[RMDB]
RNA sequence: GGGAACGACUCGAGUAGAGUCGAAAAAUAUGAUGAGCAGCAAGAUGUUUGGUGCUACUGCGCACAGCAGUGAGCCGAGGGUGAACGCCAAUACCGAACCCAUGAAAAGCCGCCUGGUGCCGAACCGCGUCAUUAUCAGUUUCGACUGAUAAUGACGAAAAGAAACAACAACAACAAC
Reactivity to DMS in 0.01 (KOAc 150mM, MgCl2 10mM, bicine 150mM(pH8.5), 24C), signal-to-noise 4, nucleotides 027 to 126: a130u010a080u010g000a110u010g020a100g000c020a030g020c050a030a060g000a120u000g020u000u010u000g010g010u000g020c040u000a060c020u000g000c020g030c200a120c190a160g010c030a030g010u000g020a080g010c000c050g010a100g020g010g020u000g010a090a090c080g010c030c030a030a050u020a060c140c030g010a090a080c040c000c010a050u010g000a050a100a120a130g000c050c030g020c080c030u000g000g000u000g010c020c030g010a080a090c080c080g000
Reactivity to 2A3 in 0.01 (KOAc 150mM, MgCl2 10mM, bicine 150mM(pH8.5), 24C), signal-to-noise 2, nucleotides 027 to 126: a010u170a110u120g090a000u040g010a000g040c010a000g020c020a030a070g040a130u070g070u080u080u060g060g040u060g030c030u020a030c020u010g010c020g000c010a090c060a130g050c000a000g000u050g110a000g010c020c010g030a030g000g030g000u080g050a070a020c040g010c040c000a050a020u050a070c010c000g020a030a020c000c010c000a010u070g020a050a090a010a040g000c010c020g000c030c030u070g060g010u030g000c000c020g030a030a020c000c030g020
Structure probing data (DMS and 2A3) for a 177-nucleotide construct.
The RNA was probed in 150 mM KOAc, 10 mM MgCl2 and 150 mM bicine (pH 8.5) at 24 C.